RNA sequence: GGGAACGACUCGAGUAGAGUCGAAAACUAUGCAGAUUCGUCUGCAUAGAGACCCGAUGAAGCGGCACUUACAGAGCUUCAUACACGUAAGAAGUGCAAUAAAGGGACGAGGGUUCGCCCUCGUCAAACGUGUGACAAGUUUCGACUUGUCACACGUAAAAGAAACAACAACAACAAC
Reactivity to DMS in 0.01 (KOAc 150mM, MgCl2 10mM, bicine 150mM(pH8.5), 24C), signal-to-noise 2, nucleotides 027 to 126: c000u000a010u010g000c000a000g000a030u000u020c230g010u000c000u000g000c000a000u000a000g010a110g000a130c000c010c010g000a080u000g010a020a010g050c020g000g010c010a010c050u000u000a300c110a060g010a080g000c030u000u000c020a020u000a100c050a120c240g030u030a120a090g000a110a060g010u000g020c070a200a070u010a080a040a100g030g000g000a000c000g000a000g000g000g010u000u000c300g000c000c000c010u000c000g000u010c000a030a010
Reactivity to 2A3 in 0.01 (KOAc 150mM, MgCl2 10mM, bicine 150mM(pH8.5), 24C), signal-to-noise 2, nucleotides 027 to 126: c020u010a010u010g010c000a020g010a100u030u130c130g110u020c040u010g000c000a000u000a000g020a000g030a010c020c000c020g000a020u030g010a010a000g020c040g050g020c040a010c030u050u190a070c080a100g150a010g050c000u000u000c000a010u050a040c090a020c090g080u080a060a030g040a120a010g070u000g000c010a000a050u230a210a120a040g260g040g000a010c010g020a000g000g000g050u060u130c160g100c020c020c000u000c010g000u000c000a000a000